[RMDB]
RNA sequence: GGGAACGACUCGAGUAGAGUCGAAAAGCCACUGACUACGGUCAGUGGCAAUAAAUCACAGGAAACGCCCAAAAGAGAAAAUCUCACCUGUGAAAAGGGCGAACAGGCUAGGUACGCCUAGCCUGAACGCAUUAGGCCGUUUCGACGGCCUAAUGCGAAAAGAAACAACAACAACAAC
Reactivity to DMS in 0.01 (KOAc 150mM, MgCl2 10mM, bicine 150mM(pH8.5), 24C), signal-to-noise 1, nucleotides 027 to 126: g000c000c000a000c000u070g000a000c000u000a140c170g030g000u000c000a000g080u000g000g000c000a000a010u070a060a230a230u130c030a000c000a000g000g000a190a010a040c190g000c110c060c010a030a100a100a060g000a030g000a080a120a160a170u000c000u000c000a300c000c000u000g000u000g000a000a110a260a050g000g010g010c110g050a000a230c000a000g060g000c000u000a000g000g030u000a110c300g070c000c020u000a000g000c010c000u000g000a010a010
Reactivity to 2A3 in 0.01 (KOAc 150mM, MgCl2 10mM, bicine 150mM(pH8.5), 24C), signal-to-noise 1, nucleotides 027 to 126: g000c000c000a050c000u150g010a000c000u010a040c300g130g000u000c000a000g000u000g020g030c000a000a000u000a000a000a000u080c000a000c000a000g060g060a260a300a000c050g040c040c020c020a000a040a020a010g040a000g000a100a300a000a100u090c000u000c000a050c010c030u000g000u000g000a120a000a000a000g020g010g000c060g110a170a090c030a040g000g000c000u000a030g130g000u060a000c230g200c050c000u000a000g000c000c000u000g000a000a000